[RMDB]
RNA sequence: GGGAACGACUCGAGUAGAGUCGAAAAGAUAUGGAGGAUCCUUGGGAGCCACACAAUCGGAAACGAUUGUGGUUGGCGACGAUCAAGUGAUCCUCCUAAGUCAAACCUGUGUCUUCGGACACAGGAACAUAACCUCUACCUUCGGGUAGAGGUUAUGAAAAGAAACAACAACAACAAC
Reactivity to 2A3 in 0.01 (KOAc 150mM, MgCl2 10mM, bicine 150mM(pH8.5), 24C), signal-to-noise 2, nucleotides 027 to 126: g000a010u060a020u160g000g000a000g000g000a000u010c000c010u000u000g020g000g010a010g000c000c000a010c000a010c000a020a000u010c010g030g040a020a030a030c010g000a000u020u010g020u000g030g040u070u160g000g000c010g000a040c010g000a020u010c010a000a000g020u130g050a000u000c000c000u000c000c000u000a010a000g000u000c010a030a030a110c000c010u010g000u000g010u000c020u060u090c300g180g000a010c010a000c000a000g000g010a000a010
Reactivity to DMS in 0.01 (KOAc 150mM, MgCl2 10mM, bicine 150mM(pH8.5), 24C), signal-to-noise 3, nucleotides 027 to 126: g010a010u010a230u010g000g020a010g020g010a000u000c000c010u000u000g000g010g000a040g010c000c000a050c000a000c010a010a000u000c000g010g000a070a070a170c000g020a010u010u000g020u010g000g010u030u010g020g010c000g010a060c300g010a020u010c000a000a020g010u010g000a000u000c010c000u000c000c000u010a000a040g000u010c030a140a100a210c000c010u000g020u000g010u000c000u000u020c230g020g010a030c000a010c000a010g000g010a050a110